An RNA of 177 nucleotides, treated with DMS and 2A3 and read out base by base.
Conditions: 150 mM KOAc, 10 mM MgCl2 and 150 mM bicine (pH 8.5), 24 C.
The data come from the RNA Mapping Database (RMDB), library TTRDEL.
For DMS, 16,063 sequencing reads were counted.
RNA sequence: GGGAACGACUCGAGUAGAGUCGAAAAGAUAUGGACUGUGAGAACGAACUACGCUUACAUGGUCGGAAACGACCAUGAAGCGCGACACAGUCCUAAGUCAAAACGAUGAUAGUUCGCUAUCAUCGAACUUAAUGUCUUUCUUCGGAAAGACAUUAAGAAAAGAAACAACAACAACAAC
Reactivity to DMS in 0.01 (KOAc 150mM, MgCl2 10mM, bicine 150mM(pH8.5), 24C), signal-to-noise 9, nucleotides 027 to 126: g000a040u010a300u010g010g010a010c000u000g000u000g000a200g020a120a110c180g010a110a140c130u010a140c020g000c010u000u000a090c000a000u000g000g000u000c000g000g000a060a080a160c000g010a000c000c000a000u000g000a020a000g000c000g010c030g000a150c010a010c000a010g000u000c000c000u000a010a070g000u000c040a070a070a100a150c030g010a010u000g010a010u010a010g000u000u020c230g020c000u000a000u000c000a010u000c000g010a040a080
Reactivity to 2A3 in 0.01 (KOAc 150mM, MgCl2 10mM, bicine 150mM(pH8.5), 24C), signal-to-noise 9, nucleotides 027 to 126: g030a010u050a040u110g010g000a000c000u010g030u050g050a170g090a300a060c100g020a090a060c140u250a090c300g020c020u020u090a190c030a000u000g000g000u000c000g000g000a060a070a030c010g000a010c000c000a000u000g000a000a000g000c000g000c010g040a040c000a000c000a000g000u010c000c000u000a040a010g020u010c030a010a010a080a150c010g000a000u000g000a000u000a000g050u050u060c300g000c150u000a000u010c000a000u000c000g010a040a000